Chemical mapping of a 177-nucleotide RNA with DMS and 2A3. For DMS the reverse transcriptase was MarathonRT. The reactions ran in a buffer of 150 mM KOAc, 10 mM MgCl2 and 150 mM bicine (pH 8.5), at 24 C. The 2A3 profile rests on 23,365 reads.

[RMDB]
RNA sequence: GGGAACGACUCGAGUAGAGUCGAAAAGAUAUGGAGUAUCUGAGGGCAACAGCUUGCUCUUCUCGGAAACGAGAAGAGGCAAGACAUGCCUAAGGAUACUCCUAAGUCAAACUCGUGUUCGCACGAGCCAACAUAAUCACUUCGGUGAUUAUGUUGGAAAAGAAACAACAACAACAAC
Reactivity to DMS in 0.01 (KOAc 150mM, MgCl2 10mM, bicine 150mM(pH8.5), 24C), signal-to-noise 6, nucleotides 027 to 126: g000a040u000a300u000g020g010a020g030u000a010u000c000u010g000a300g000g000g010c000a020a050c250a180g000c010u000u000g000c000u000c000u000u000c000u000c010g010g000a090a070a180c000g010a010g000a010a000g000a020g040g000c000a000a020g000a060c120a260u010g000c000c010u010a010a300g000g000a010u000a010c000u000c000c000u000a010a060g000u000c040a070a110a210c010u000c000g010u010g000u000u020c210g000c030a000c010g000a000g000
Reactivity to 2A3 in 0.01 (KOAc 150mM, MgCl2 10mM, bicine 150mM(pH8.5), 24C), signal-to-noise 5, nucleotides 027 to 126: g040a010u070a040u200g000g000a010g000u000a000u010c010u020g020a060g000g010g030c020a060a050c050a260g090c020u010u020g000c010u000c000u010u010c010u010c000g030g030a130a090a040c020g000a000g000a010a000g010a020g090g000c000a000a010g020a020c020a070u090g000c000c000u000a010a000g000g000a000u000a000c000u010c000c000u000a000a010g010u000c010a020a040a120c000u000c010g000u020g060u060u120c300g020c120a000c020g020a010g000